This 207-nucleotide RNA was probed chemically with 2A3. Conditions: 150 mM KOAc, 10 mM MgCl2 and 150 mM bicine (pH 8.5), 24 C. Values cover nucleotides 27 to 156. 2A3 adducts were read by reverse transcription with SuperScript II with manganese. It was measured as part of the RMDB library OK3TST.
[RMDB]
RNA sequence: GGGAACGACUCGAGUAGAGUCGAAAACUGCAGGUCAACGGAGGCUCUUCAGAUCAGCUAUUGCAGAAGAAAGGUCAGCCAAGCGCUCUGGGCCGUCUCGACUGUAUAUAGGAGCUUCUGAUUUCAACCAGAAGCUAACUCUCUCCGAAACAAUGAGGAGUCACUACUCAUUCGUGAGUAGUGACUCAAAAGAAACAACAACAACAAC
Reactivity to 2A3 in 0.01 (KOAc 150mM, MgCl2 10mM, bicine 150mM(pH8.5), 24C), signal-to-noise 2, nucleotides 027 to 156: c010u000g000c010a060g000g100u090c060a100a000c040g050g000a020g040g000c030u070c020u250u070c020a000g020a300u100c070a020g070c030u040a010u030u120g000c010a000g020a050a030g060a020a080a030g030g030u040c030a010g010c020c020a300a040g100c150g030c150u070c070u120g050g000g010c010c020g080u040c000u000c080g030a020c010u000g010u040a030u010a020u020a300g050g000a010g050c000u000u010c010u000g060a070u090u230u300c050a050a040c010c000a030g000a000a000g000c020u010a090a000c010u020c000u000c000u060c070c010g070a070a170a010c100a010a140u230g010a080g160